RNA sequence: GGGAACGACUCGAGUAGAGUCGAAAAGAAUAUAAGAGCGCAGUAAAUGUGAGAGCAAACUGCGCCCGGACUGUAGGAUCCGGUGGCACAGCAACGCUCACUCACAAAACGCUGUGCCACAUGAAGAAAUUAAUAUCAUGUUCGCAUGAUAUUAAUUAAAAGAAACAACAACAACAAC
Reactivity to DMS in 0.01 (KOAc 150mM, MgCl2 10mM, bicine 150mM(pH8.5), 24C), signal-to-noise 9, nucleotides 027 to 126: g010a150a090u050a060u020a040a050g010a130g000c000g010c000a010g010u000a040a100a190u020g000u000g010a090g000a080g000c040a080a150a030c000u010g010c000g000c000c010c000g000g010a020c060u020g020u030a070g000g000a200u010c010c010g000g010u000g000g000c000a000c000a000g010c010a140a120c170g000c030u000c050a040c070u020c230a130c240a070a070a090a120c180g010c000u000g010u000g000c000c000a000c020a050u030g010a100a110g010a100
Reactivity to 2A3 in 0.01 (KOAc 150mM, MgCl2 10mM, bicine 150mM(pH8.5), 24C), signal-to-noise 9, nucleotides 027 to 126: g030a060a030u240a010u050a110a030g030a010g000c000g000c010a000g010u070a040a120a090u070g010u030g020a050g010a010g060c050a090a140a000c000u000g000c000g000c000c000c000g010g000a010c030u140g100u260a060g090g080a090u000c000c000g010g000u010g000g000c000a000c000a010g000c010a040a100c070g020c030u040c020a050c020u110c020a090c040a040a090a030a010c100g000c000u000g000u000g000c000c000a010c010a020u140g050a050a070g060a040
An RNA of 177 nucleotides, treated with DMS and 2A3 and read out base by base. The RNA was probed in 150 mM KOAc, 10 mM MgCl2 and 150 mM bicine (pH 8.5) at 24 C. DMS adducts were read by reverse transcription with MarathonRT. It was measured as part of the RMDB library OK1LIB.